[RMDB]
RNA sequence: GGGAACGACUCGAGUAGAGUCGAAAACCCGGAUCGCUGGCGCCCAAGGACUUCGGCAUGGAGAGCUUGAAUGGCUUCGGUGUGGGACCGAAUAGCAAAAAGAAGAAAAAGAAGCGACGACACAGCAACUCAUAAUGAGUUUCGACUCAUUAUGAGUAAAAGAAACAACAACAACAAC
Reactivity to DMS in 0.01 (KOAc 150mM, MgCl2 10mM, bicine 150mM(pH8.5), 24C), signal-to-noise 5, nucleotides 027 to 126: c010c000c010g000g000a090u010c100g020c030u000g010g010c080g010c030c030c050a090a090g000g010a090c050u000u000c050g010g010c060a060u000g010g010a090g010a080g010c020u000u000g000a100a120u010g010g000c030u000u000c040g010g010u010g020u000g020g010g010a110c020c010g000a050a060u010a070g020c040a040a040a050a090a080g010a090a080g010a070a070a060a090a100g010a110a100g010c040g010a070c080g000a070c080a040c100a070g010c100a130
Reactivity to 2A3 in 0.01 (KOAc 150mM, MgCl2 10mM, bicine 150mM(pH8.5), 24C), signal-to-noise 3, nucleotides 027 to 126: c010c010c000g010g060a120u060c020g000c030u020g050g020c010g010c000c010c010a040a040g040g030a030c000u030u020c070g050g020c050a030u070g030g020a070g000a010g040c020u060u100g090a160a030u120g030g000c000u030u030c020g000g010u060g020u100g040g030g020a010c010c010g010a050a060u090a100g020c040a010a030a110a000a090g080a060a050g040a020a120a060a020a000g040a040a010g050c010g050a040c040g020a020c050a000c010a080g080c020a050
An RNA of 177 nucleotides, treated with DMS and 2A3 and read out base by base. The 2A3 profile rests on 4,200 reads. 2A3 adducts were read by reverse transcription with SuperScript II with manganese. It was measured as part of the RMDB library OK2TST. High DMS reactivity at an A or C suggests that its Watson-Crick edge is free.